[RMDB]
RNA sequence: GGGAACGACUCGAGUAGAGUCGAAAAAGCACUGGUACGAUACGUCGUACCAGUGCAGUCGUUGGGAUGGAACGCAAUUAAAUACAUGUGUGACGUCUAUUUGCGAACGACGUAAUUAUUUUUCAAAAUCACGCUAUCGUGUUCGCACGAUAGCGAAUCAGCAAAGAGUGUUCGCACUCUUUGCUGAAAAAGAAACAACAACAACAAC
Reactivity to 2A3 in 0.01 (KOAc 150mM, MgCl2 10mM, bicine 150mM(pH8.5), 24C), signal-to-noise 2, nucleotides 027 to 156: a000g000c000a000c000u010g000g010u020a000c000g000a000u040a040c230g060u030c000g000u010a000c000c000a000g000u010g000c010a010g000u000c000g010u040u020g110g010g000a000u000g000g000a050a000c000g020c060a020a070u180u170a110a140a150u220a130c190a190u050g020u030g000u020g050a090c040g000u000c010u060a160u080u150u160g070c040g030a000a000c000g010a000c040g010u050a040a000u150u130a140u070u140u040u060u060c090a070a030a050a040u190c030a020c100g000c000u000a000u010c000g000u010g030u020u030c120g040c080a020c010g020a000u000a000g000c000g000a000a000
Reactivity to DMS in 0.01 (KOAc 150mM, MgCl2 10mM, bicine 150mM(pH8.5), 24C), signal-to-noise 2, nucleotides 027 to 156: a080g050c000a000c000u000g030g020u000a020c000g040a070u000a090c300g060u000c010g080u020a000c000c000a000g020u010g040c000a010g010u000c000g020u000u000g000g000g000a040u000g020g000a120a130c010g050c030a060a300u010u000a050a030a150u000a110c090a070u000g010u000g000u010g010a170c070g020u000c020u020a110u000u000u000g020c040g030a020a030c010g010a030c010g010u000a090a090u000u000a110u000u060u000u000u000c070a070a090a130a060u010c100a160c020g030c000u000a020u000c010g020u000g020u000u010c300g040c000a020c000g000a040u000a010g020c000g040a010a010

Source: RMDB library M2RFPK, as collected in RNAgym. This 207-nucleotide RNA was probed chemically with 2A3 and DMS. Conditions: 150 mM KOAc, 10 mM MgCl2 and 150 mM bicine (pH 8.5), 24 C. For DMS the reverse transcriptase was MarathonRT. Values are in units of 0.01, from 0 to 300, in steps of 10. For DMS, 4,606 sequencing reads were counted.